Source: RMDB library OK2TST, as collected in RNAgym. The record gives the reactivity of an RNA of 177 nucleotides to DMS and 2A3. For 2A3 the reverse transcriptase was SuperScript II with manganese. Conditions: 150 mM KOAc, 10 mM MgCl2 and 150 mM bicine (pH 8.5), 24 C. DMS (dimethyl sulfate) methylates the pairing face of unpaired adenines and cytosines.

RNA sequence: GGGAACGACUCGAGUAGAGUCGAAAAGAUGAUCCCCUUCUAAUCCUUGCUCAUUACCUGGAUUUCAGCAAGCCUCCUGGUAACUGCACCAAGUGUCUUACUGGGAAGGGGUUAAAGGCCCAUGCGGGCUAUUCCUAAAUUUCGAUUUAGGAAUAGCAAAAGAAACAACAACAACAAC
Reactivity to DMS in 0.01 (KOAc 150mM, MgCl2 10mM, bicine 150mM(pH8.5), 24C), signal-to-noise 9, nucleotides 027 to 126: g010a130u000g000a100u000c000c000c000c010u000u000c010u000a070a050u000c020c000u000u000g010c060u000c300a110u010u010a270c020c020u000g000g000a040u000u000u010c070a030g010c050a030a040g000c060c040u000c020c030u010g010g010u000a060a130c280u010g000c140a100c020c020a020a030g010u000g000u000c090u000u000a020c030u000g000g000g000a030a010g000g000g010g000u000u000a050a080a180g000g010c000c000c010a120u010g020c130g010g010
Reactivity to 2A3 in 0.01 (KOAc 150mM, MgCl2 10mM, bicine 150mM(pH8.5), 24C), signal-to-noise 8, nucleotides 027 to 126: g070a030u150g030a060u100c000c000c000c000u000u020c010u030a040a030u010c000c000u020u020g030c020u040c100a120u070u140a070c010c000u020g030g000a030u040u060u160c030a030g000c000a010a020g010c000c010u010c000c000u000g020g000u090a130a110c120u180g030c040a010c010c020a040a020g010u010g020u060c010u020u030a030c010u020g040g010g000a010a010g000g000g000g000u010u030a100a130a010g050g000c010c020c040a030u180g100c120g060g150

For DMS, 30,298 sequencing reads were counted. Values cover nucleotides 27 to 126.